RNA sequence: GGGAACGACUCGAGUAGAGUCGAAAAUGAUGACUGUUCUUCCUGUUGCCUUCAGACCUGGCAUUAGGAUUUUAGGUCAUCAUAAAUUAAAAUUUGAUUUUCUUCACUCAGAGAAUAUUAGGAUAAUACAGUUCAGAUGGUUCGCCAUCUGAACUGUAAAAGAAACAACAACAACAAC
Reactivity to 2A3 in 0.01 (KOAc 150mM, MgCl2 10mM, bicine 150mM(pH8.5), 24C), signal-to-noise 2, nucleotides 027 to 126: u030g000a000u000g000a000c000u000g040u150u040c000u000u020c040c000u010g080u000u010g000c000c000u090u070c080a120g110a260c040c140u000g000g040c040a000u020u090a000g040g000a080u000u000u000u090a030g000g000u000c000a000u010c000a000u000a000a110a000u120u240a040a000a040a050u100u050u100g060a080u060u000u000u000c020u020u040c200a150c120u080c140a000g010a000g000a000a000u000a110u250u110a050g100g000a080u110a120a070u020

Structure probing data (2A3) for a 177-nucleotide construct. 2A3 adducts were read by reverse transcription with SuperScript II with manganese. The 2A3 profile rests on 724 reads. It was measured as part of the RMDB library RFM100. Conditions: 150 mM KOAc, 10 mM MgCl2 and 150 mM bicine (pH 8.5), 24 C.